Chemical mapping of a 177-nucleotide RNA with DMS and 2A3. The 2A3 profile rests on 10,156 reads. The DMS profile rests on 2,751 reads. As a SHAPE reagent, 2A3 marks flexible, mostly unpaired nucleotides at the ribose 2'-OH. DMS adducts were read by reverse transcription with MarathonRT. The reactions ran in a buffer of 150 mM KOAc, 10 mM MgCl2 and 150 mM bicine (pH 8.5), at 24 C.
RNA sequence: GGGAACGACUCGAGUAGAGUCGAAAAGAUAUGGAGUAGGGCACGACAUGGACGCUUCGGAAACGAAGUACCAACAGCGUGCCUACUCCUAAGUCAAAACUUCAUCCUCCUUCGGGAGGAUGAAGAAGUACGAUGUACUGUUCGCAGUACAUCGUACAAAAGAAACAACAACAACAAC
Reactivity to DMS in 0.01 (KOAc 150mM, MgCl2 10mM, bicine 150mM(pH8.5), 24C), signal-to-noise 3, nucleotides 027 to 126: g020a020u010a300u000g000g000a010g020u000a010g020g000g000c000a010c000g000a100c160a230u010g000g020a090c180g000c000u000u000c000g010g000a070a060a150c000g010a020a010g030u000a120c020c010a010a160c240a180g000c000g000u000g000c000c000u000a000c000u010c000c000u000a020a070g000u000c030a090a070a030a170c010u000u010c000a000u000c000c000u000c000c000u000u000c220g000g000g010a010g010g000a000u000g000a010a010g000a010a100
Reactivity to 2A3 in 0.01 (KOAc 150mM, MgCl2 10mM, bicine 150mM(pH8.5), 24C), signal-to-noise 4, nucleotides 027 to 126: g010a000u040a010u060g000g000a010g020u030a070g080g200g100c010a010c020g230a190c120a160u090g020g080a210c150g000c030u000u000c010g020g000a010a020a010c000g000a020a010g010u010a030c000c010a090a170c100a080g190c010g010u000g000c010c000u000a000c000u010c000c000u000a010a000g010u000c010a000a000a100a160c010u000u010c000a010u020c000c000u010c000c000u020u040c150g040g000g000a000g000g000a000u000g010a000a000g000a000a000